[RMDB]
RNA sequence: GGGAACGACUCGAGUAGAGUCGAAAAUCCUAAGUCAGCGCGCAGUAGAGGGAUGAGGGAGAUAGAUCGGAAACGAUCUAUCGACGAUCUCAUCCUCCCCACCUACUGUACGCUGAUAUGGAAAAGCCUCAUGAUUGGUUCGCCAAUCAUGAGGCAACUACUUAUUCUUGUUCGCAAGAAUAAGUAGAAAAGAAACAACAACAACAAC
Reactivity to 2A3 in 0.01 (KOAc 150mM, MgCl2 10mM, bicine 150mM(pH8.5), 24C), signal-to-noise 4, nucleotides 027 to 156: u020c010c000u030a100a020g010u000c000a000g000c010g000c000g000c010a000g000u000a000g000a030g000g010g000a000u010g000a000g020g000g000a010g000a000u000a000g000a000u000c010g010g040a060a050a050c010g000a000u000c000u000a000u010c000g020a040c000g000a000u000c000u000c000a000u000c010c000u030c000c000c000c000a050c000c000u000a000c000u000g000u000a010c000g000c000u000g000a000u000a040u020g030g010a060a090a030a060g010c000c000u000c000a000u000g010a000u010u010g010g090u070u090c240g060c100c000a000a000u000c000a000u000g000a000g000g000c000a000a000
Reactivity to DMS in 0.01 (KOAc 150mM, MgCl2 10mM, bicine 150mM(pH8.5), 24C), signal-to-noise 3, nucleotides 027 to 156: u000c010c010u000a080a190g020u000c010a010g000c000g030c010g030c000a040g010u000a020g010a300g010g010g010a020u010g010a030g000g030g000a070g010a030u000a010g020a010u010c000g020g010a190a100a300c000g020a030u000c010u000a000u000c000g020a060c190g000a030u000c010u000c000a020u020c000c000u010c260c130c030c050a300c170c000u010a000c000u000g020u000a020c000g010c000u000g010a020u000a060u020g030g000a080a120a130a130g020c000c010u000c010a010u000g010a020u000u000g000g030u010u000c300g000c000c020a020a020u000c000a010u000g010a000g010g030c020a000a020